RNA sequence: GGGAACGACUCGAGUAGAGUCGAAAAGACGCCUUUAGAAGAAGAGGCUAGGGGGUAUUCCGGUGUGGGAUACUUAGUAAUAUGCAACGCUAAUUGCAUAAGAUUGUAGGGCGGAAUUUACAGUCUUUAGAGAUAAGCACGUUCGCGUGCUUAUCAACUGCCAUAAGGGUUUCGACCCUUAUGGCAGAAAAGAAACAACAACAACAAC
Reactivity to 2A3 in 0.01 (KOAc 150mM, MgCl2 10mM, bicine 150mM(pH8.5), 24C), signal-to-noise 2, nucleotides 027 to 156: g060a020c090g040c000c010u060u030u070a270g070a300a010g020a050a000g020a000g040g000c030u040a080g010g020g000g040g050u040a020u010u080c060c050g090g020u140g070u130g100g010g010a020u010a080c030u020u050a040g020u030a050a120u030a000u080g000c000a000a020c080g010c230u150a080a070u090u010g000c010a000u000a030a060g020a050u040u210g040u020a000g020g050g020c060g060g040a020a040u040u080u070a120c070a020g040u020c040u040u080u110a090g010a000g000a060u000a000a000g040c020a000c000g020u010u080c230g000c000g040u010g020c000u010u000a000u010c000a000a000
This 207-nucleotide RNA was probed chemically with 2A3. The data come from the RNA Mapping Database (RMDB), library M2RFPK.